[RMDB]
RNA sequence: GGGAACGACUCGAGUAGAGUCGAAAAAGUAGAAUCGCUUGAACCCGGGAAGUGGAAGUUGCAGUGAGCCAAGAUUGUGCCAUUGCACUCUAGCCUGGGUGGCAGAGCGAAACUCUGUCUCAAAAAAAUCUAAGGGAAGUUUCGACUUCCCUUAGAUAAAAGAAACAACAACAACAAC
Reactivity to DMS in 0.01 (KOAc 150mM, MgCl2 10mM, bicine 150mM(pH8.5), 24C), signal-to-noise 3, nucleotides 027 to 126: a050g000u020a030g020a050a300u000c010g020c010u000u000g010a180a030c020c010c010g010g000g010a040a080g040u010g010g020a010a050g020u010u000g000c010a010g010u000g000a090g020c010c020a150a200g010a180u010u010g010u020g010c010c010a000u000u000g000c010a010c000u000c010u000a080g000c010c000u000g010g000g020u000g000g010c100a110g000a020g010c000g000a010a050a240c020u000c010u000g000u010c000u030c010a010a000a040a110a080a130